[RMDB]
RNA sequence: GGGAACGACUCGAGUAGAGUCGAAAAGAUAUGGAACACAUCGAUCUGGUAGUACAACAGCUCGGAAACGAGACAUGUACUCCCAGGGAGUGUUCCUAAGUCAAACGCUCUGCUUCGGCAGAGCGAAGACAAUAUCUAUCUUCGGAUAGAUAUUGUCAAAAGAAACAACAACAACAAC
Reactivity to 2A3 in 0.01 (KOAc 150mM, MgCl2 10mM, bicine 150mM(pH8.5), 24C), signal-to-noise 8, nucleotides 027 to 126: g010a010u070a040u160g000g010a010a000c000a000c010a270u300c070g080a090u030c010u000g020g000u010a010g000u000a000c010a130a020c040a160g040c010u000c000g000g040a050a080a050c010g000a010g020a030c020a070u070g000u000a000c000u000c000c010c000a000g000g000g010a020g000u000g000u000u000c000c000u000a100a010g060u020c030a110a040a060c010g000c000u000c000u000g020c010u050u090c300g150g000c010a000g000a000g010c000g000a010a000
Reactivity to DMS in 0.01 (KOAc 150mM, MgCl2 10mM, bicine 150mM(pH8.5), 24C), signal-to-noise 8, nucleotides 027 to 126: g000a050u000a300u010g000g000a010a000c000a000c000a300u000c150g000a050u020c000u000g000g000u000a020g000u000a010c000a030a060c240a160g000c000u000c000g010g000a060a100a170c000g000a020g000a030c080a160u000g010u000a000c000u000c060c000c000a010g000g000g000a030g020u000g010u000u000c000c000u000a010a070g000u000c030a090a130a200c020g000c000u000c000u000g010c000u000u010c160g020g010c000a010g000a020g010c000g000a010a040